[RMDB]
RNA sequence: GGGAACGACUCGAGUAGAGUCGAAAAGACGCACGAGUGCAGCGUCAAGGAAGACAACUCCGGGUCUUCCAAGUACUCGAAGACACCGGAAGGCGGAAACGUCUUCCAACCGGAGAAGGUGUCGAAAGGGUACGUGCAAGUUCGCUUGUACGUACCCAAAAGAAACAACAACAACAAC
Reactivity to DMS in 0.01 (KOAc 150mM, MgCl2 10mM, bicine 150mM(pH8.5), 24C), signal-to-noise 3, nucleotides 027 to 126: g030a030c000g010c040a160c050g000a090g020u050g000c140a170g000c000g010u010c030a110a130g000g000a070a030g000a000c000a070a220c000u000c010c000g000g000g020u010c010u000u000c000c000a060a110g020u030a040c050u000c140g000a110a130g010a020c030a040c020c010g030g000a070a000g000g010c040g000g000a120a030a180c010g020u000c000u000u020c000c010a210a250c040c010g000g000a020g000a130a190g000g020u020g000u010c020g000a050a080a100
Reactivity to 2A3 in 0.01 (KOAc 150mM, MgCl2 10mM, bicine 150mM(pH8.5), 24C), signal-to-noise 6, nucleotides 027 to 126: g010a000c000g060c020a020c110g140a110g170u270g070c150a040g010c050g020u000c030a010a020g020g020a020a020g000a010c030a080a070c100u010c000c000g020g000g010u000c000u000u000c000c000a010a010g030u040a040c000u010c080g020a060a020g010a000c000a010c020c030g010g000a000a000g000g010c010g010g020a030a050a040c010g000u000c000u000u000c000c000a010a020c000c000g000g020a000g020a050a080g020g020u030g000u000c000g010a080a010a000